Chemical mapping of a 177-nucleotide RNA with 2A3 and DMS. The RNA was probed in 150 mM KOAc, 10 mM MgCl2 and 150 mM bicine (pH 8.5) at 24 C. Reactivities are given for positions 27 through 126. For 2A3 the reverse transcriptase was SuperScript II with manganese.
RNA sequence: GGGAACGACUCGAGUAGAGUCGAAAAGAUAUGGACUCAAACUCCUUUUGACGUGUGUCGGAAACGAUUUCGACACGAUAAGGAGUGAGUCCUAAGUCAAACGGGUAACAGUUCGCUGUUACCCGAACGAGGUAAAGCACUUCGGUGCUUUACCUCGAAAAGAAACAACAACAACAAC
Reactivity to 2A3 in 0.01 (KOAc 150mM, MgCl2 10mM, bicine 150mM(pH8.5), 24C), signal-to-noise 2, nucleotides 027 to 126: g010a000u070a020u150g000g000a000c000u020c000a270a270a230c000u070c020c000u060u040u000u120g220a130c150g300u300g000u040g030u140c040g000g090a080a180a120c260g190a300u070u000u090c000g000a000c000a000c060g000a020u010a030a010g000g000a010g000u010g000a000g010u000c000c000u000a130a000g060u030c040a130a110a070c020g000g010g000u000a010a010c010a020g020u050u060c230g180c160u030g000u000u000a020c000c000c000g010a000a010
Reactivity to DMS in 0.01 (KOAc 150mM, MgCl2 10mM, bicine 150mM(pH8.5), 24C), signal-to-noise 1, nucleotides 027 to 126: g000a080u000a300u040g000g000a000c000u000c000a090a160a140c010u010c000c000u000u000u050u030g010a280c290g010u010g000u030g010u000c010g020g000a000a010a190c300g000a090u000u000u000c000g010a010c000a020c000g000a030u000a000a010g000g000a000g060u000g000a000g050u000c000c000u000a000a040g000u000c060a030a220a300c000g000g000g000u000a000a020c010a040g010u000u000c190g010c000u000g050u000u000a020c000c000c000g000a000a000